The data come from the RNA Mapping Database (RMDB), library OK1LIB. Chemical mapping of a 177-nucleotide RNA with 2A3. The RNA was probed in 150 mM KOAc, 10 mM MgCl2 and 150 mM bicine (pH 8.5) at 24 C.
RNA sequence: GGGAACGACUCGAGUAGAGUCGAAAACGAGGCGUCCAACCGGUUAGCGCAUCGGCUGGCAGGUUGUGGGGCCGGCCCGGGCGAGUGUGUGGCGCUGCUGUUCGAGCGGUGCGCGCCGGCGGUCGUGGGAGUUUGCUACCUUCGGGUAGCAAACUCCAAAAGAAACAACAACAACAAC
Reactivity to 2A3 in 0.01 (KOAc 150mM, MgCl2 10mM, bicine 150mM(pH8.5), 24C), signal-to-noise 1, nucleotides 027 to 126: c040g040a140g150g020c110g170u000c050c000a050a050c110c000g000g000u070u100a090g010c010g010c150a140u060c080g190g000c010u000g000g000c000a000g030g060u200u130g000u260g140g000g010g010c000c000g020g020c000c000c000g000g090g000c030g030a170g160u040g000u100g020u140g000g000c010g030c060u000g060c050u040g040u030u300c120g050a090g000c040g050g000u000g000c030g000c000g010c080c090g050g080c000g000g070u000c000g010u030g130